[RMDB]
RNA sequence: GGGAACGACUCGAGUAGAGUCGAAAAAUCAGAGGGCGCUAUCAUGCAUACUAGGAUUGUCUGCUCAUGCACAGAACCAACUACCGAUAACUAACAGUGCAUGAAGGUUAGUUAUUCCAUAUUAAUUAAAACUCGUAAUUCUUCGGAAUUACGAGAACAGUGGUAUUUACUUCGGUAAAUACCACUGAAAAGAAACAACAACAACAAC
Reactivity to DMS in 0.01 (KOAc 150mM, MgCl2 10mM, bicine 150mM(pH8.5), 24C), signal-to-noise 2, nucleotides 027 to 156: a060u000c030a130g030a090g010g000g040c040g010c020u000a110u000c040a070u010g040c020a080u010a060c040u000a160g000g010a120u000u000g030u000c020u010g010c070u000c030a050u000g010c010a070c030a110g020a100a150c080c030a100a090c110u000a160c100c020g000a110u000a020a060c030u000a020a030c040a110g010u010g000c040a060u010g010a040a160g060g000u000u000a010g010u000u000a030u000u000c040c060a120u000a120u010u000a090a120u010u000a050a050a050a170c000u000c010g010u000a020a020u000u000c000u000u050c300g030g010a030a000u000u000a020c000g000a000g000a020a060
Reactivity to 2A3 in 0.01 (KOAc 150mM, MgCl2 10mM, bicine 150mM(pH8.5), 24C), signal-to-noise 5, nucleotides 027 to 156: a000u060c040a020g030a050g040g060g000c060g000c050u090a090u200c070a060u090g040c020a030u040a180c040u050a040g080g010a070u050u070g040u030c050u060g020c020u010c010a010u030g030c010a010c000a020g060a110a100c040c030a040a070c040u120a100c050c080g040a010u000a020a010c010u010a010a000c000a020g020u010g030c000a000u010g030a020a020g060g000u000u000a000g000u010u000a020u090u030c020c000a060u080a070u230u200a190a090u090u140a040a100a070a080c010u000c000g000u000a000a000u000u000c010u010u020c070g040g000a000a000u000u000a000c000g000a000g000a000a000

The record gives the reactivity of an RNA of 207 nucleotides to DMS and 2A3. Reactivities are rounded to 0.1 and cut off at 0 and 3. DMS adducts were read by reverse transcription with MarathonRT.